[RMDB]
RNA sequence: GGGAACGACUCGAGUAGAGUCGAAAAUGAUGGCAGGUUCACCCCGUACGGUGCGGAAGUUCGCGCUUCCGUGAAACGCGAAAAUCGGACGGUGGCUGCAAGUCGCAUCGCAAAACCGCGGCAAGUGUUAACCUGGACCUCUUCGGAGGUCCAGGAAACUAUAGUAUCACUUCGGUGAUACUAUAGUAAAAGAAACAACAACAACAAC
Reactivity to 2A3 in 0.01 (KOAc 150mM, MgCl2 10mM, bicine 150mM(pH8.5), 24C), signal-to-noise 2, nucleotides 027 to 156: u140g060a050u100g030g000c020a020g000g070u150u100c000a030c020c020c000c000g000u030a040c020g000g060u030g020c000g010g000a010a020g010u070u250c070g030c040g000c080u000u000c010c010g000u010g060a140a120a000c150g020c020g050a090a070a010a080u040c020g010g010a040c090g010g010u030g030g000c000u000g010c010a020a000g000u030c000g000c070a050u070c060g000c120a080a120a070a060c080c040g010c030g030g010c090a140a070g020u040g030u160u100a120a080c000c000u010g000g000a000c000c000u000c000u050u090c190g080g000a000g000g020u000c000c000a000g000g000a000a000
Reactivity to DMS in 0.01 (KOAc 150mM, MgCl2 10mM, bicine 150mM(pH8.5), 24C), signal-to-noise 1, nucleotides 027 to 156: u000g030a040u000g000g030c020a070g030g030u000u000c080a140c020c020c000c010g000u000a030c020g040g040u000g050c020g020g010a130a060g000u000u000c250g010c300g010c010u000u010c010c110g050u000g000a070a080a060c070g040c040g000a090a030a110a050u000c010g000g010a000c020g000g020u010g010g010c010u000g010c060a080a080g030u010c030g040c030a100u000c030g020c030a070a070a100a140c080c050g010c090g000g000c030a090a120g000u000g010u000u000a120a120c000c000u000g030g030a040c010c000u030c000u000u010c300g060g010a020g050g020u000c000c000a000g010g010a000a020